Source information
Chemical mapping of a 177-nucleotide RNA with DMS. Values are in units of 0.01, from 0 to 300, in steps of 10. The RNA was probed in 150 mM KOAc, 10 mM MgCl2 and 150 mM bicine (pH 8.5) at 24 C.
RNA sequence: GGGAACGACUCGAGUAGAGUCGAAAAUAAAUGAUGGCAAGCUUGAAAGAUGUGUUUUUGUUAAAGAUGUUGCAGAAAAUAUUGCCAGCAAGCUCAUUUAUCAUAUUGAUUUUUAUGAAGUGGAUAGACGUCAACUACCUUUCGAGGUAGUUGACGUAAAAGAAACAACAACAACAAC
Reactivity to DMS in 0.01 (KOAc 150mM, MgCl2 10mM, bicine 150mM(pH8.5), 24C), signal-to-noise 1, nucleotides 027 to 126: u000a050a020a060u010g010a100u000g000g020c130a130a280g010c040u010u010g020a080a160a170g010a050u000g000u010g000u000u000u010u000u000g020u020u000a030a050a160g050a170u000g030u010u000g020c000a060g000a020a030a030a060u020a060u010u000g010c290c040a070g030c030a070a280g000c060u000c020a050u000u000u000a050u020c000a030u000a140u010u020g000a090u000u010u000u020u000a060u020g020a040a170g020u010g020g000a080u000a080g010